[RMDB]
RNA sequence: GGGAACGACUCGAGUAGAGUCGAAAAAAGAUAUGGAUUUGACUCCCCACCCUUCACUCCCGGUAAUUCAGCUCUCGGAAACGAGAGCUGUGCCAGGGAGGUGAAGGAGGUCAAAUCCUAAGUCAAACGUAGUCACCAAGUUCGCUUGGUGACUACGAAAAGAAACAACAACAACAAC
Reactivity to DMS in 0.01 (KOAc 150mM, MgCl2 10mM, bicine 150mM(pH8.5), 24C), signal-to-noise 1, nucleotides 027 to 126: a070a020g050a100u000a300u000g030g010a020u000u000u000g000a020c000u000c240c000c020c120a300c030c010c000u000u020c000a030c040u000c000c000c010g000g040u000a070a160u020u010c020a030g040c000u000c000u000c000g040g000a060a060a090c000g000a020g000a000g010c030u000g010u010g020c010c000a110g070g000g030a020g000g060u000g000a010a030g000g000a050g000g000u000c020a030a000a000u000c000c010u010a010a140g040u010c120a070a080a160